Source: RMDB library 15KLIB, as collected in RNAgym. Structure probing data (DMS and 2A3) for a 170-nucleotide construct. The 2A3 profile rests on 10,778 reads. As a SHAPE reagent, 2A3 marks flexible, mostly unpaired nucleotides at the ribose 2'-OH.
RNA sequence: GGGAACGACUCGAGUAGAGUCGAAAAAAGAAGAGAAGAUUUUCGAGGAAAUACUCCCAAGAAGUUCCCGGAGGGAUCCAAGAGACGGACGACUUUCCCCUAUUGGUUGGGAAAAGUCCCGGAACCAGCGCAACUGCGUUCGCGCAGUUGAAAAGAAACAACAACAACAAC
Reactivity to DMS in 0.01 (KOAc 150mM, MgCl2 10mM, bicine 150mM(pH8.5), 24C), signal-to-noise 7, nucleotides 027 to 129: a000a130g030a120a050g000a160g020a070a070g000a020u000u010u020u010c050g030a100g020g000a050a060a090u040a080c050u000c020c100c080a060a030g020a080a170g010u010u000c030c020c040g040g020a020g040g000g010a060u030c020c110a100a120g030a110g030a100c050g020g020a060c090g020a070c000u020u020u020c020c010c000c100u020a070u080u070g000g060u040u040g020g030g030a010a010a030a050g000u000c020c070c060g000g040a070a110c050c050a010g030c140g010
Reactivity to 2A3 in 0.01 (KOAc 150mM, MgCl2 10mM, bicine 150mM(pH8.5), 24C), signal-to-noise 5, nucleotides 027 to 129: a020a020g120a000a010g030a000g010a110a010g010a010u020u050u020u050c010g000a040g020g050a030a080a010u080a080c040u020c020c030c010a010a030g050a010a010g020u050u030c000c000c000g000g000a010g000g010g010a030u010c020c010a060a010g050a000g020a060c040g000g020a010c040g010a000c060u000u010u050c010c000c010c000u050a190u170u250g160g030u080u100g000g000g000a030a020a010a020g030u020c010c010c000g000g010a020a030c030c010a020g050c030g000